[RMDB]
RNA sequence: GGGAACGACUCGAGUAGAGUCGAAAAGCCAAGGCGCUUCACUCGGAGACAAUUGGAGUACAUUUGGAGGGGUGGACCAAAUGGAGAUUAUGGCUAAUGCCAAUAAGGGUGUGACUAUUAAUGUAGGCCAGUCACUUAGAUUCGUCUAAGUGACUGGAAAAGAAACAACAACAACAAC
Reactivity to 2A3 in 0.01 (KOAc 150mM, MgCl2 10mM, bicine 150mM(pH8.5), 24C), signal-to-noise 1, nucleotides 027 to 126: g000c000c020a030a060g110g000c080g010c030u060u050c030a060c090u040c030g030g030a080g020a030c040a070a130u080u080g030g000a020g050u030a030c000a070u040u040u060g020g020a050g030g000g000g000u050g010g020a020c010c000a010a020a010u040g060g010a060g020a050u100u130a040u150g020g000c040u130a190a050u240g000c000c030a000a050u110a060a020g050g010g010u070g040u060g060a010c020u010a030u180u130a100a100u170g030u060a020g020g060
Reactivity to DMS in 0.01 (KOAc 150mM, MgCl2 10mM, bicine 150mM(pH8.5), 24C), signal-to-noise 4, nucleotides 027 to 126: g040c040c040a130a150g010g000c120g020c010u000u010c050a060c100u020c090g020g010a130g010a070c120a090a090u010u000g000g010a110g000u010a100c030a050u000u000u000g010g020a090g020g010g030g030u000g000g000a150c040c020a020a040a060u000g010g000a120g000a100u010u010a080u010g000g020c010u010a080a090u000g000c020c010a030a070u010a070a090g000g010g010u000g000u000g010a090c050u000a100u000u000a050a070u010g010u000a070g010g010